[RMDB]
RNA sequence: GGGAACGACUCGAGUAGAGUCGAAAAGGCUGCGUAUCACUAUAGGGUACGUGAUAGUGCGAUAUAAGAAGCACUGGUACAUGCCGGCAGGGACAGUUAAGAGAUGGCCGCAGUCUCGUGUCCCUGCAAAAGGAGUUCUCGUUCGCGAGAACUCCAAGCAGAGUACUCUCUUCGGAGAGUACUCUGCAAAAGAAACAACAACAACAAC
Reactivity to 2A3 in 0.01 (KOAc 150mM, MgCl2 10mM, bicine 150mM(pH8.5), 24C), signal-to-noise 1, nucleotides 027 to 156: g000g020c000u000g030c020g010u060a010u000c040a110c290u140a100u300a300g040g000g070u010a000c010g010u010g020a010u030a120g000u010g020c020g060a020u020a070u020a270a050g170a070a110g000c000a000c000u000g040g020u090a190c130a110u250g000c000c030g000g020c010a000g030g000g000a000c000a060g040u140u130a110a040g000a000g010a010u050g120g080c150c050g010c040a020g000u010c000u000c010g040u010g000u000c000c000c000u000g000c010a000a000a000a000g000g000a000g010u000u000c010u000c020g000u030u030c130g000c010g100a000g010a000a010c000u010c000c000a000a000
Description
The record gives the reactivity of an RNA of 207 nucleotides to 2A3. For 2A3, 548 sequencing reads were counted. Conditions: 150 mM KOAc, 10 mM MgCl2 and 150 mM bicine (pH 8.5), 24 C. The data come from the RNA Mapping Database (RMDB), library M2RFPK.